The record gives the reactivity of an RNA of 177 nucleotides to 2A3 and DMS.
High DMS reactivity at an A or C suggests that its Watson-Crick edge is free.
The reactions ran in a buffer of 150 mM KOAc, 10 mM MgCl2 and 150 mM bicine (pH 8.5), at 24 C.
It was measured as part of the RMDB library OK1LIB.
RNA sequence: GGGAACGACUCGAGUAGAGUCGAAAAGAAAACGCCGACGUGCACGGCGAGCACGAAAAGAAAACUCAGACUGUCACUGAGAGACAGAAAAGAAAACCUAGACUAUCACUAGGAGAUAGAAAAGAAAGGGAUAGUAAGACUUCGGUCUUACUAUCCCAAAAGAAACAACAACAACAAC
Reactivity to 2A3 in 0.01 (KOAc 150mM, MgCl2 10mM, bicine 150mM(pH8.5), 24C), signal-to-noise 1, nucleotides 027 to 126: g060a000a020a050a030c080g000c020c030g050a010c000g030u030g040c070a040c030g000g070c000g000a020g000c100a020c110g110a000a120a000a000g270a000a040a000a050c010u000c000a000g030a050c000u020g000u020c030a070c200u110g050a000g010a000g030a080c000a080g120a020a090a000a020g160a010a010a010a010c000c000u000a020g070a100c020u040a110u300c000a090c070u000a000g070g000a060g000a060u120a000g090a080a110a040a000g100a060a020a000
Reactivity to DMS in 0.01 (KOAc 150mM, MgCl2 10mM, bicine 150mM(pH8.5), 24C), signal-to-noise 1, nucleotides 027 to 126: g000a070a000a030a020c150g000c020c020g000a300c110g000u000g010c170a090c010g000g040c000g030a090g000c000a160c070g020a070a060a000a130g000a000a160a090a050c000u000c020a030g000a200c050u000g020u000c000a130c020u070g000a000g000a050g070a070c000a000g000a020a000a300a190g000a040a020a070a050c000c000u000a000g000a300c050u100a020u050c180a150c110u000a000g000g000a000g000a040u000a220g000a060a230a160a170g000a150a130a110